[RMDB]
RNA sequence: GGGAACGACUCGAGUAGAGUCGAAAAUACUAGCAUUCGGUUCCAACCCUGGAUGGAUACUCAAAGGUUGGCUGAGUUCCUUCCUCCGGCGUUGGUUCCGAUGCUCCAUCCAAGGCCGGAAACCAAAUGAUAACGCUUAUUUCGAUAAGCGUUAUCAAAAAGAAACAACAACAACAAC
Reactivity to 2A3 in 0.01 (KOAc 150mM, MgCl2 10mM, bicine 150mM(pH8.5), 24C), signal-to-noise 3, nucleotides 027 to 126: u180a050c070u020a010g010c000a020u080u170c020g000g000u000u010c000c000a010a000c030c020c020u010g000g010a020u060g010g000a020u070a180c000u020c020a130a120a060g290g040u220u090g190g000c040u000g020a000g000u020u040c000c000u020u000c010c000u040c050c020g000g010c070g020u010u000g000g000u000u000c000c000g010a000u000g000c000u000c000c010a030u030c010c000a030a020g090g000c020c030g040g020a040a040a030c030c020a070a070a130
Reactivity to DMS in 0.01 (KOAc 150mM, MgCl2 10mM, bicine 150mM(pH8.5), 24C), signal-to-noise 4, nucleotides 027 to 126: u010a130c150u000a050g000c020a030u010u000c020g010g000u000u000c000c000a010a020c020c050c010u000g000g000a020u010g020g000a040u000a020c020u010c030a020a120a140g010g020u010u010g000g000c120u010g000a020g000u010u000c030c020u010u010c010c020u000c120c090g000g000c280g010u010u000g010g000u010u000c010c000g000a020u000g010c020u000c060c030a050u000c020c030a060a130g010g010c120c090g000g000a050a120a150c080c060a060a060a130
About this RNA:
Structure probing data (2A3 and DMS) for a 177-nucleotide construct. It was measured as part of the RMDB library M2PK90. 2A3 adducts were read by reverse transcription with SuperScript II with manganese. Conditions: 150 mM KOAc, 10 mM MgCl2 and 150 mM bicine (pH 8.5), 24 C.